[RMDB]
RNA sequence: GGGAACGACUCGAGUAGAGUCGAAAAGCCAAUGGCGAUAUUGUCAGCGAUGCCGGUGGCGCAGCCAAUACGCCUUAUUUUGGCACCGUCGGUACCGGCCUGCAACUGGGCGGCCUGAAAUAUACGACGCUUUUAGUCAGUUCGCUGACUAAAAGCGAAAAGAAACAACAACAACAAC
Reactivity to 2A3 in 0.01 (KOAc 150mM, MgCl2 10mM, bicine 150mM(pH8.5), 24C), signal-to-noise 1, nucleotides 027 to 126: g000c000c000a000a110u100g020g000c020g090a090u000a030u110u090g050u050c050a020g030c030g030a050u130g010c000c000g020g060u160g020g030c030g000c020a010g060c000c000a000a020u060a020c050g070c000c000u120u070a180u040u150u040u030g010g000c030a060c030c060g030u060c030g020g120u030a070c010c020g000g000c010c000u050g010c080a130a120c090u040g100g040g000c000g070g060c010c010u030g030a060a100a010u230a020u080a040c050g060a010
Reactivity to DMS in 0.01 (KOAc 150mM, MgCl2 10mM, bicine 150mM(pH8.5), 24C), signal-to-noise 1, nucleotides 027 to 126: g010c000c020a090a070u000g010g010c000g000a090u000a020u000u000g000u000c040a060g000c000g010a130u010g010c000c000g000g010u000g030g000c020g030c030a160g000c100c020a000a020u000a020c100g010c060c060u000u000a080u010u040u000u020g000g010c020a200c070c000g000u000c030g000g000u020a030c110c060g010g000c010c080u010g000c130a050a110c210u000g000g000g000c000g030g020c170c040u010g000a050a060a100u020a080u000a120c110g010a110